Chemical mapping of a 177-nucleotide RNA with DMS and 2A3. The reactions ran in a buffer of 150 mM KOAc, 10 mM MgCl2 and 150 mM bicine (pH 8.5), at 24 C. The DMS profile rests on 2,297 reads. For 2A3 the reverse transcriptase was SuperScript II with manganese. It was measured as part of the RMDB library TTRDES.
RNA sequence: GGGAACGACUCGAGUAGAGUCGAAAAGAUAUGGAGUGUUGAUAAUUCGAGAGACCACUCGGAAACGAGUGGUGGAAUGAAUAUCACUGCACUCCUAAGUCAAAAGACUUUCCUUCGGGAAAGUCAACACUCUAAUGCUCUUCGGAGCAUUAGAGUGAAAAGAAACAACAACAACAAC
Reactivity to DMS in 0.01 (KOAc 150mM, MgCl2 10mM, bicine 150mM(pH8.5), 24C), signal-to-noise 4, nucleotides 027 to 126: g000a040u000a300u000g000g000a050g030u000g000u000u000g000a040u000a050a110u000u000c010g000a100g020a300g000a010c000c000a000c000u010c010g000g010a090a110a060c000g000a020g010u000g010g000u010g010g000a220a090u010g000a030a020u000a040u000c010a020c300u010g000c000a010c000u000c000c000u000a020a110g010u010c040a130a080a160a070g000a010c000u010u000u000c000c010u000u010c300g040g020g000a000a000a040g010u000c000a050a090
Reactivity to 2A3 in 0.01 (KOAc 150mM, MgCl2 10mM, bicine 150mM(pH8.5), 24C), signal-to-noise 3, nucleotides 027 to 126: g030a060u090a090u170g000g000a000g010u000g020u110u080g060a060u080a300a300u050u080c140g010a070g000a010g050a250c000c000a000c010u000c000g010g020a040a080a040c010g000a000g010u020g030g010u020g020g040a030a030u080g010a010a020u020a000u090c010a020c190u150g010c010a000c000u040c000c000u020a120a030g040u000c050a000a020a040a290g000a000c010u020u000u000c030c000u040u080c300g120g010g000a020a000a000g010u000c000a000a020